[RMDB]
RNA sequence: GGGAACGACUCGAGUAGAGUCGAAAAGAUAUGGACGUGGGAUCGAGCACGAGAGGUUUGUUUAAUUCGGAAACGAAUUAAACAAACUCCCCACCUCGUGAACUACUCGCGCACCACGUCCUAAGUCCCUUUUCUUUCAGUUCGCUGAAAGAAAAGGAAAAGAAACAACAACAACAAC
Reactivity to DMS in 0.01 (KOAc 150mM, MgCl2 10mM, bicine 150mM(pH8.5), 24C), signal-to-noise 2, nucleotides 027 to 126: g010a070u000a260u010g000g000a000c000g040u000g000g000g020a210u000c000g010a040g000c000a010c000g020a030g000a110g020g000u010u000u010g010u000u000u000a000a000u000u000c000g000g020a150a050a300c010g000a010a000u000u000a000a000a000c020a010a000a000c010u000c080c050c010c030a300c160c000u000c010g000u000g000a080a090c050u000a300c010u000c030g030c180g020c300a200c010c010a010c000g040u000c030c010u000a000a140g000u000c070
Conditions: 150 mM KOAc, 10 mM MgCl2 and 150 mM bicine (pH 8.5), 24 C.
Chemical mapping of a 177-nucleotide RNA with DMS.
It was measured as part of the RMDB library TTRINS.
For DMS, 1,337 sequencing reads were counted.